[RMDB]
RNA sequence: GGGAACGACUCGAGUAGAGUCGAAAAAGUUAAUUUGCUUAGGAUAAUGGCCUAAUCUCUAUUGUGACAAAGGACAUGAUUUUGUUCCUUUUUAUGGCUGCAUAGUUUUUUAGUCCAAGUGUCUUCCAGCAGUCAUAAGGUUGGAAUUUGGACCAAGCCAGCAAAUACCGUUCGCGGUAUUUGCUGGAAAAGAAACAACAACAACAAC
Reactivity to 2A3 in 0.01 (KOAc 150mM, MgCl2 10mM, bicine 150mM(pH8.5), 24C), signal-to-noise 1, nucleotides 027 to 156: a000g210u160u120a080a170u150u110u220g020c020u040u020a080g000g020a040u040a150a080u160g220g010c030c000u040a100a080u030c040u000c040u060a180u170u140g130u060g060a040c150a060a080a040g010g000a000c000a080u060g160a300u230u210u120u020g040u120u080c010c030u040u190u000u000u040a040u060g000g000c000u000g000c030a050u030a170g030u040u070u050u080u120u080a030g010u000c000c000a030a140g030u010g060u060c070u010u000c020c010a010g000c000a010g000u000c030a040u050a050a010g020g030u050u040g000g040a000a160u030u150u140g000g040a000c080c000a020a050g060
About this RNA
Chemical mapping of a 207-nucleotide RNA with 2A3. For 2A3 the reverse transcriptase was SuperScript II with manganese. The data come from the RNA Mapping Database (RMDB), library OK3TST. The reactions ran in a buffer of 150 mM KOAc, 10 mM MgCl2 and 150 mM bicine (pH 8.5), at 24 C.